Structure probing data (2A3 and DMS) for a 177-nucleotide construct. Reactivities are rounded to 0.1 and cut off at 0 and 3. The reactions ran in a buffer of 150 mM KOAc, 10 mM MgCl2 and 150 mM bicine (pH 8.5), at 24 C.

[RMDB]
RNA sequence: GGGAACGACUCGAGUAGAGUCGAAAAAUCAUACCGAAAGAGUCACGUAAGGGAAGGUGCUACAGUAGUAUGCUUUCAAUUAGACGUGUACUUGCAAAAUGAUGUACAACAGAUUAUUGGCACCAAAGCAUACGACGGUAUUCGUACCGUCGUAUGCAAAAGAAACAACAACAACAAC
Reactivity to 2A3 in 0.01 (KOAc 150mM, MgCl2 10mM, bicine 150mM(pH8.5), 24C), signal-to-noise 2, nucleotides 027 to 126: a000u030c030a030u030a070c080c000g050a050a080a040g040a030g030u030c000a010c030g030u030a060a110g040g010g020a030a000g080g030u000g040c000u040a090c030a150g110u140a010g000u020a030u050g200c010u010u020u000c020a110a190u130u060a100g030a110c000g010u010g010u020a030c010u000u040g020c020a090a050a010a070u070g020a050u030g040u080a070c010a100a000c020a120g070a060u060u040a040u160u080g010g000c060a010c070c040a020a030a040
Reactivity to DMS in 0.01 (KOAc 150mM, MgCl2 10mM, bicine 150mM(pH8.5), 24C), signal-to-noise 2, nucleotides 027 to 126: a020u020c120a010u000a140c070c030g020a090a090a130g000a020g000u000c010a030c010g020u000a090a160g000g010g000a020a010g000g030u000g010c040u000a060c170a210g020u000a010g020u000a000u010g020c010u000u000u000c010a090a130u020u000a080g000a050c120g010u000g000u030a000c000u000u000g020c250a050a160a050a090u000g000a060u000g010u000a120c060a010a070c150a040g010a120u000u000a250u010u010g000g000c030a080c060c050a040a030a140